[RMDB]
RNA sequence: GGGAACGACUCGAGUAGAGUCGAAAACGGACGAGUUCAAAUCGAGGCUGUCGACUGCGGUCAACGCGAUCGCCUGAUCUGAGGUUGACGUGGUCACCGAGCCGCUCACAAAGCCGGCGCUAGUGGCUGGUUGCACCUAAUUCGUUAGGUGCAACCAAAAAGAAACAACAACAACAAC
Reactivity to DMS in 0.01 (KOAc 150mM, MgCl2 10mM, bicine 150mM(pH8.5), 24C), signal-to-noise 3, nucleotides 027 to 126: c070g010g010a120c050g000a060g010u000u000c100a060a130a100u010c110g020a110g000g000c020u000g010u010c110g010a030c030u000g010c010g000g000u000c030a030a020c020g000c040g010a020u010c050g010c210c260u030g000a010u000c010u000g040a040g020g000u000u000g010a040c000g010u000g000g000u000c000a060c080c110g000a080g010c020c000g000c070u000c040a080c130a080a140a110g010c050c030g000g000c040g010c070u000a060g010u000g000g010c070
Reactivity to 2A3 in 0.01 (KOAc 150mM, MgCl2 10mM, bicine 150mM(pH8.5), 24C), signal-to-noise 1, nucleotides 027 to 126: c070g000g090a040c040g030a070g070u150u100c090a070a070a140u140c080g000a030g030g000c060u100g030u150c090g020a000c020u020g010c050g050g150u030c020a010a030c030g010c030g160a030u040c030g110c190c100u200g030a030u000c040u110g140a030g130g020u030u030g000a010c010g030u040g050g000u020c000a000c030c000g000a000g000c010c010g000c020u020c030a100c040a040a080a040g040c070c030g050g050c000g030c010u000a030g040u030g110g070c020